Structure probing data (DMS and 2A3) for a 177-nucleotide construct. The data come from the RNA Mapping Database (RMDB), library OK2TRN. Reactivities are given for positions 27 through 126. 2A3 is a SHAPE reagent: it acylates the 2'-hydroxyl of flexible nucleotides of all four kinds. Conditions: 150 mM KOAc, 10 mM MgCl2 and 150 mM bicine (pH 8.5), 24 C.
[RMDB]
RNA sequence: GGGAACGACUCGAGUAGAGUCGAAAAUUAUUGGAGACAGAGCUAAAGGUCCAAUACUGCCUUUAAUCUUCAAACCCAUAAAUAGGCUGGAAGGGUAUUCCAUAAUGGUUUUACACUGGGGAGAGGCCCCUCAUUAGAUCUUCGGAUCUAAUGAGGGAAAAGAAACAACAACAACAAC
Reactivity to DMS in 0.01 (KOAc 150mM, MgCl2 10mM, bicine 150mM(pH8.5), 24C), signal-to-noise 2, nucleotides 027 to 126: u010u020a060u000u000g020g010a020g010a110c140a050g010a100g020c210u000a020a080a080g010g020u000c070c160a080a090u010a060c280u010g020c000c020u000u000u000a080a130u000c010u000u010c040a030a020a170c010c010c020a100u010a060a060a090u010a100g010g030c070u000g000g000a060a040g000g000g010u000a050u010u030c040c020a050u020a060a080u000g000g020u000u010u000u000a050c050a060c060u000g020g000g010g010a080g000a110g010g030c170
Reactivity to 2A3 in 0.01 (KOAc 150mM, MgCl2 10mM, bicine 150mM(pH8.5), 24C), signal-to-noise 1, nucleotides 027 to 126: u150u070a040u010u030g000g010a040g000a030c020a080g060a020g140c050u070a000a000a110g040g020u060c010c050a000a090u090a210c110u090g000c000c000u030u110u010a030a060u020c010u000u020c010a020a040a180c030c000c000a030u150a030a140a010u080a020g060g000c040u040g080g000a030a020g090g030g060u060a110u070u000c000c000a000u110a300a100u240g000g030u020u050u130u060a030c080a020c000u020g000g000g010g000a110g020a000g030g020c000